[RMDB]
RNA sequence: GGGAACGACUCGAGUAGAGUCGAAAACAUCACCUUAUGUGAUGGACCAAUUAAAAGAGGCGAAAAUCGACGAACUGGAUUUGCAUCGCGCAAUUGUCGCAUUGAGCGAAAAAAUGAAAGCGGUUGAGCGUGAAUAGGUCUUCGGACCUAUUCACGCAAAAGAAACAACAACAACAAC
Reactivity to 2A3 in 0.01 (KOAc 150mM, MgCl2 10mM, bicine 150mM(pH8.5), 24C), signal-to-noise 1, nucleotides 027 to 126: c000a010u000c000a000c000c020u080u260a230u300g000u020g050a000u020g010g000a020c000c000a060a020u170u260a050a150a070a030g120a080g000g050c080g070a140a050a000a000u070c010g100a060c120g000a190a090c020u050g010g030a070u010u000u110g020c030a010u000c020g000c010g000c040a000a000u000u200g300u190c120g000c070a000u000u130g020a000g000c000g040a020a100a000a000a000a000u090g010a030a090a000g040c020g030g040u030u080g050a020
Reactivity to DMS in 0.01 (KOAc 150mM, MgCl2 10mM, bicine 150mM(pH8.5), 24C), signal-to-noise 1, nucleotides 027 to 126: c000a010u000c010a010c020c290u000u000a210u110g030u000g000a040u000g000g000a150c030c000a070a270u000u000a070a040a100a140g040a090g000g020c000g010a040a060a080a100u000c060g030a140c040g010a040a110c100u000g000g000a090u000u010u000g000c110a300u000c060g000c050g000c030a000a040u000u000g000u000c100g000c120a080u040u000g000a090g000c000g030a000a000a040a080a060a040u000g000a120a040a050g020c100g040g000u000u000g010a140